An RNA of 177 nucleotides, treated with DMS and 2A3 and read out base by base. For 2A3, 10,476 sequencing reads were counted. It was measured as part of the RMDB library OK2TST. For DMS the reverse transcriptase was MarathonRT. For 2A3 the reverse transcriptase was SuperScript II with manganese. The RNA was probed in 150 mM KOAc, 10 mM MgCl2 and 150 mM bicine (pH 8.5) at 24 C.

RNA sequence: GGGAACGACUCGAGUAGAGUCGAAAAGUUCGCCGAAGCGGGGUGGGCGCUGCCGCUGUCGGACGACCCAGCGGGGCUGGCCGAGAACGACGCCGUCGCCGAUACCCUGCCAGGCCCGCUUGCGACGAACAGGUAAGAAGUUCGCUUCUUACCUGUUAAAAGAAACAACAACAACAAC
Reactivity to DMS in 0.01 (KOAc 150mM, MgCl2 10mM, bicine 150mM(pH8.5), 24C), signal-to-noise 9, nucleotides 027 to 126: g010u010u000c140g020c030c020g010a160a070g010c000g000g000g010g010u000g010g010g020c070g020c030u000g010c020c010g010c020u000g010u000c010g010g000a100c030g010a120c030c020c010a090g010c050g000g010g000g000c010u000g000g010c000c090g000a060g000a140a140c060g010a070c050g020c190c180g010u000c030g020c020c020g000a130u010a120c070c040c020u000g000c020c010a060g000g000c000c010c020g010c020u000u010g010c040g000a140c150g000
Reactivity to 2A3 in 0.01 (KOAc 150mM, MgCl2 10mM, bicine 150mM(pH8.5), 24C), signal-to-noise 5, nucleotides 027 to 126: g020u030u040c020g000c000c020g030a020a000g000c010g010g000g020g030u100g050g130g030c120g030c040u100g100c010c000g010c000u040g250u050c010g000g030a120c010g010a030c000c010c000a010g030c020g020g010g000g050c010u000g010g010c030c060g080a080g020a120a020c060g060a020c020g060c120c080g040u080c020g000c010c000g030a030u140a170c030c000c010u020g000c000c000a020g030g090c000c010c010g010c020u020u090g040c020g020a040c010g020